[RMDB]
RNA sequence: GGGAACGACUCGAGUAGAGUCGAAAAAGCACGGUUUUUGAGGACGCAAUUUGUCCGUGCGGUAAUGCCCUCCUUUACACUUUCUCGCAUGGUGCGGGAGUGUGGAGAGGAAACAAAAGCUAGUCUCGAUAGGCGGUUAACUUCGGUUAACCGCCAACAAGAGCGUAGGGUUCGCCCUACGCUCUUGAAAAGAAACAACAACAACAAC
Reactivity to 2A3 in 0.01 (KOAc 150mM, MgCl2 10mM, bicine 150mM(pH8.5), 24C), signal-to-noise 2, nucleotides 027 to 156: a000g000c000a010c010g030g000u000u010u000u010u050g100a100g000g000a000c010g020c060a110a180u000u000u000g010u040c010c000g000u010g000c000g040g040u180a050a030u220g080c010c000c010u020c000c000u040u070u030a000c020a000c000u050u060u090c010u010c010g060c040a200u300g280g050u300g100c000g010g010g000a010g000u020g000u000g000g010a040g020a020g010g040a020a040a020c020a000a010a020a000g040c070u090a030g010u020c010u010c060g050a090u120a110g000g030c010g000g000u020u010a010a020c010u040u060c170g000g010u010u000a000a000c040c000g000c000c000a000a000